[RMDB]
RNA sequence: GGGAACGACUCGAGUAGAGUCGAAAACGAUCUGGGUGACGCCAGAUCCCACGAUCAGUUUUCGUGAAGAAUUUUUGACGGGACCAGAGGCUACCCGUAGGUGACCCGCUUACUUUUGCGGGACGCCGCUUCAAGUCCAAUUCGUUGGACUUGAAGCAAAAGAAACAACAACAACAAC
Reactivity to 2A3 in 0.01 (KOAc 150mM, MgCl2 10mM, bicine 150mM(pH8.5), 24C), signal-to-noise 8, nucleotides 027 to 126: c040g000a010u000c010u020g000g000g010u080g080a030c070g050c050c000a010g000a010u010c020c000c000a050c020g010a040u070c080a180g120u060u070u070u050c020g020u060g060a130a100g060a160a190u060u090u060u090u190g060a030c000g010g000g040a020c020c020a080g050a060g190g010c020u050a090c000c000c000g000u010a050g000g000u030g040a140c000c010c000g000c010u090u120a190c050u110u220u220u140g000c000g000g010g010a040c000g000c000c020
Reactivity to DMS in 0.01 (KOAc 150mM, MgCl2 10mM, bicine 150mM(pH8.5), 24C), signal-to-noise 3, nucleotides 027 to 126: c170g010a020u000c010u020g000g000g020u000g030a150c300g000c060c040a100g000a030u000c010c150c010a040c120g010a070u000c180a150g050u010u020u000u010c030g040u000g010a150a150g020a060a090u000u000u000u000u000g000a010c020g020g010g000a100c080c070a130g000a110g000g000c090u000a090c030c000c020g020u000a010g000g010u010g000a070c000c010c000g020c010u010u020a100c250u000u000u000u000g000c000g000g000g010a030c010g010c010c000
Chemical mapping of a 177-nucleotide RNA with 2A3 and DMS. Values cover nucleotides 27 to 126. The RNA was probed in 150 mM KOAc, 10 mM MgCl2 and 150 mM bicine (pH 8.5) at 24 C. DMS adducts were read by reverse transcription with MarathonRT.